[RMDB]
RNA sequence: GGGAACGACUCGAGUAGAGUCGAAAAUUCGCGUUGCAUGGUGAUCGCCGUGAUCACAAACAUCACAAAGAGUGGGAACAGGCCCAGUAGCACCAGGCAAGCGGUGUUGAACCCGGAUGGGGUACCGACGUAGUGUUUAAUUCGUUAAACACUACGUAAAAGAAACAACAACAACAAC
Reactivity to 2A3 in 0.01 (KOAc 150mM, MgCl2 10mM, bicine 150mM(pH8.5), 24C), signal-to-noise 9, nucleotides 027 to 126: u040u020c010g000c070g090u050u030g000c020a030u020g020g000u020g020a090u100c050g040c060c040g040u040g010a020u040c020a010c020a100a110a000c030a040u110c040a010c040a060a130a020g110a060g050u050g010g020g010a130a110c100a200g160g000c010c030c020a010g010u040a020g010c000a000c010c000a000g020g000c010a020a010g030c010g000g030u070g040u040u060g040a040a030c010c010c020g030g090a210u260g030g010g000g020u030a060c000c030g010
Reactivity to DMS in 0.01 (KOAc 150mM, MgCl2 10mM, bicine 150mM(pH8.5), 24C), signal-to-noise 9, nucleotides 027 to 126: u010u000c010g010c020g020u000u000g020c020a050u000g010g010u000g010a090u010c090g030c170c120g010u000g010a120u010c050a090c150a100a100a140c220a110u000c080a060c130a100a140a110g000a150g020u000g000g000g010a150a090c150a110g020g010c010c090c060a090g010u000a100g010c010a020c010c010a030g000g010c020a030a070g010c020g000g010u000g010u000u000g000a100a130c020c010c010g010g010a120u010g000g000g000g010u010a070c070c060g010